[RMDB]
RNA sequence: GGGAACGACUCGAGUAGAGUCGAAAACAGAGCGUCGUAGAACGUCAUGUCACGGGCGAGGAUCACGCCCAGAACCGUCUCCACGCGGUAGGUGGCCGGCAGACCGAUCGUGUCCGUGUCACGGACCGCCUUUUAAGCGCUUCGGCGCUUAAAAGGCAAAAGAAACAACAACAACAAC
Reactivity to DMS in 0.01 (KOAc 150mM, MgCl2 10mM, bicine 150mM(pH8.5), 24C), signal-to-noise 2, nucleotides 027 to 126: c090a150g000a140g020c000g070u000c110g000u000a040g020a070a060c100g020u000c070a140u000g000u000c020a100c130g030g000g000c030g030a050g000g000a130u000c080a140c020g000c010c000c030a060g000a130a060c050c030g000u000c050u000c100c070a150c130g000c030g000g010u010a030g000g020u000g010g010c050c020g000g030c090a050g040a120c110c050g010a060u010c080g000u000g010u010c020c010g010u010g010u000c020a060c060g000g020a090c000c130
Reactivity to 2A3 in 0.01 (KOAc 150mM, MgCl2 10mM, bicine 150mM(pH8.5), 24C), signal-to-noise 2, nucleotides 027 to 126: c080a050g080a050g130c000g050u040c110g050u190a030g050a180a000c020g030u010c030a060u130g040u060c100a040c170g000g000g000c020g060a030g040g060a050u110c050a010c070g000c020c040c000a020g060a010a000c030c030g010u040c080u040c060c020a100c060g040c020g020g010u030a060g050g130u070g010g010c050c020g000g000c100a030g070a090c000c090g020a080u090c040g030u020g030u120c000c020g050u090g100u080c070a020c050g040g000a010c050c020
Conditions: 150 mM KOAc, 10 mM MgCl2 and 150 mM bicine (pH 8.5), 24 C. The record gives the reactivity of an RNA of 177 nucleotides to DMS and 2A3. The 2A3 profile rests on 1,254 reads. For DMS, 1,537 sequencing reads were counted. Values cover nucleotides 27 to 126. For 2A3 the reverse transcriptase was SuperScript II with manganese.